[RMDB]
RNA sequence: GGGAACGACUCGAGUAGAGUCGAAAAGAUAUGGAAUCGUACCGAGCAACAGCCACGGAUCGGAAACGAUCCGGUGGACAUGCUCGUACGAUUCCUAAGUCAAAACAAGGCGGUUCGCCGCCUUGAACUAACGUAUUCACUUCGGUGAAUACGUUAGAAAAGAAACAACAACAACAAC
Reactivity to 2A3 in 0.01 (KOAc 150mM, MgCl2 10mM, bicine 150mM(pH8.5), 24C), signal-to-noise 4, nucleotides 027 to 126: g000a000u000a000u050g000g010a010a010u010c010g010u020a030c190c300g010a010g000c080a100a220c080a250g000c000c000a010c000g010g000a010u000c010g000g010a020a000a010c010g000a000u000c000c020g010g040u080g000g010a010c020a220u300g000c000u000c000g010u000a000c000g000a000u000u000c000c000u000a000a000g000u010c010a000a010a070a110c000a000a000g000g020c000g020g060u080u120c300g060c080c000g000c000c000u000u000g010a020a020
Reactivity to DMS in 0.01 (KOAc 150mM, MgCl2 10mM, bicine 150mM(pH8.5), 24C), signal-to-noise 5, nucleotides 027 to 126: g000a020u000a110u000g000g010a000a000u000c000g020u000a020c280c140g010a020g000c000a120a060c250a110g000c000c000a030c000g000g010a010u000c000g010g000a030a030a050c010g010a010u000c000c000g000g030u010g020g000a010c040a300u010g040c000u000c010g010u000a000c000g000a000u000u010c000c000u000a000a060g000u000c010a120a070a090a250c020a010a000g010g010c000g010g010u000u010c240g020c000c000g020c010c000u000u000g010a080a180